[RMDB]
RNA sequence: GGGAACGACUCGAGUAGAGUCGAAAAGGGAUACCACGCUUGUGGACCUUAUGCCCACACAGCCAUCCUCUAGUAAGUUUGUAAGACGUCUGAUGACGUGUGGGAAAACACUAGAAAUAUUAACUUGAUAACAGCUACCGUUCGCGGUAGCUGUUAUAAAAGAAACAACAACAACAAC
Reactivity to 2A3 in 0.01 (KOAc 150mM, MgCl2 10mM, bicine 150mM(pH8.5), 24C), signal-to-noise 2, nucleotides 027 to 126: g080g010g010a090u130a230c010c000a000c060g130c090u130u300g000u000g000g000a000c000c000u010u010a100u120g000c000c000c000a000c000a000c000a000g060c030c000a050u040c020c040u060c030u120a000g000u040a300a170g010u010u050u060g070u160a090a000g000a070c000g000u020c030u090g160a220u270g010a040c000g030u060g170u150g110g190g000a090a080a000a000c040a020c030u000a000g060a030a070a020u120a090u250u120a210a010c000u010u020g030
Reactivity to DMS in 0.01 (KOAc 150mM, MgCl2 10mM, bicine 150mM(pH8.5), 24C), signal-to-noise 2, nucleotides 027 to 126: g000g020g040a130u040a110c050c010a020c070g000c250u070u070g060u000g000g000a040c010c020u030u010a030u010g000c010c000c020a190c100a070c110a090g000c080c080a070u020c060c030u000c010u000a020g000u000a050a040g000u000u000u000g010u000a220a130g000a060c000g000u020c000u010g020a190u040g000a010c030g080u000g000u020g000g010g020a090a040a030a050c010a090c030u000a030g000a150a090a070u030a100u020u010a080a030c070u000u000g000
Source information: An RNA of 177 nucleotides, treated with 2A3 and DMS and read out base by base. The RNA was probed in 150 mM KOAc, 10 mM MgCl2 and 150 mM bicine (pH 8.5) at 24 C. It was measured as part of the RMDB libraries RFM100 and RFMREP.